[RMDB]
RNA sequence: GGGAACGACUCGAGUAGAGUCGAAAAGAUAUGGACUACCCACCCACAGAACUACAGCUACCUCAUCGGAAACGAUGAGGAAGCUGCUGUGGAGGUCCUAAGUCAAAUCCUAGGUUCGCCUAGGAAACAUAAUCCAACACUUCGGUGUUGGAUUAUGAAAAGAAACAACAACAACAAC
Reactivity to DMS in 0.01 (KOAc 150mM, MgCl2 10mM, bicine 150mM(pH8.5), 24C), signal-to-noise 3, nucleotides 027 to 126: g000a060u000a170u010g000g010a000c000u000a100c000c030c010a300c060c000c000a010c000a010g000a080a030c130u050a300c010a000g000c000u000a060c000c010u010c000a000u000c000g010g000a100a070a160c000g030a020u010g010a010g000g000a000a000g030c000u000g000c000u000g000u000g010g000a040g000g000u000c000c000u000a090a100g000u000c060a050a100a130u000c000c000u000a010g000g020u000u000c210g000c010c000u000a010g000g010a010a070a180
Reactivity to 2A3 in 0.01 (KOAc 150mM, MgCl2 10mM, bicine 150mM(pH8.5), 24C), signal-to-noise 2, nucleotides 027 to 126: g010a040u120a090u170g000g010a000c000u110a150c010c030c010a030c010c020c020a010c000a000g050a110a070c180u200a070c300a000g030c010u040a090c000c000u010c010a030u010c010g050g000a140a060a030c020g010a010u000g010a000g000g000a010a000g000c000u000g010c020u000g000u010g010g010a010g040g000u030c000c000u020a190a030g090u040c060a000a060a160u020c010c000u020a010g030g000u050u090c300g120c040c000u010a000g000g000a000a010a010

Source: RMDB library TTRDEL, as collected in RNAgym. This 177-nucleotide RNA was probed chemically with DMS and 2A3. 2A3 adducts were read by reverse transcription with SuperScript II with manganese. The reactions ran in a buffer of 150 mM KOAc, 10 mM MgCl2 and 150 mM bicine (pH 8.5), at 24 C. Reactivities are given for positions 27 through 126.